[RMDB]
RNA sequence: GGGAACGACUCGAGUAGAGUCGAAAAUUGAGAAGCUGCUCUGAUCCUUGUGCAGCUACUGUGGUGUGCCCAACUCUAGAACUACGUAAUGACUGGCUCAAUAAGAUCGGAAGCUACGAACAAACGACUCAAGACGAAUCUUCGGAUUCGUCUUGAGAAAAGAAACAACAACAACAAC
Reactivity to DMS in 0.01 (KOAc 150mM, MgCl2 10mM, bicine 150mM(pH8.5), 24C), signal-to-noise 2, nucleotides 027 to 126: u020u020g000a110g000a180a020g030c010u020g010c040u000c010u010g040a010u020c050c070u000u000g000u000g000c030a010g010c010u000a000c040u010g040u000g010g000u000g010u010g000c040c000c000a070a050c110u010c180u000a070g000a060a070c020u010a070c020g020u000a030a060u010g010a120c120u010g000g000c060u000c070a060a000u080a060a060g000a030u050c090g000g000a010a040g060c070u040a020c190g000a100a080c160a000a040a170c230g000a080
Reactivity to 2A3 in 0.01 (KOAc 150mM, MgCl2 10mM, bicine 150mM(pH8.5), 24C), signal-to-noise 3, nucleotides 027 to 126: u120u110g060a080g010a100a000g000c010u000g000c000u000c000u040g140a230u070c080c010u040u040g050u040g000c000a000g000c000u040a050c020u060g070u100g020g060u050g050u090g070c070c010c000a080a060c000u030c020u110a120g040a100a040c090u090a010c060g030u110a050a050u130g110a110c020u010g050g020c010u000c050a010a060u100a170a020g030a040u040c020g000g010a060a010g000c030u070a050c120g050a010a000c050a070a080a040c080g130a090
The record gives the reactivity of an RNA of 177 nucleotides to DMS and 2A3. For DMS, 1,819 sequencing reads were counted. For 2A3 the reverse transcriptase was SuperScript II with manganese. The RNA was probed in 150 mM KOAc, 10 mM MgCl2 and 150 mM bicine (pH 8.5) at 24 C. In probing experiments dimethyl sulfate is read out at A N1 and C N3, which are open when not base-paired. DMS adducts were read by reverse transcription with MarathonRT.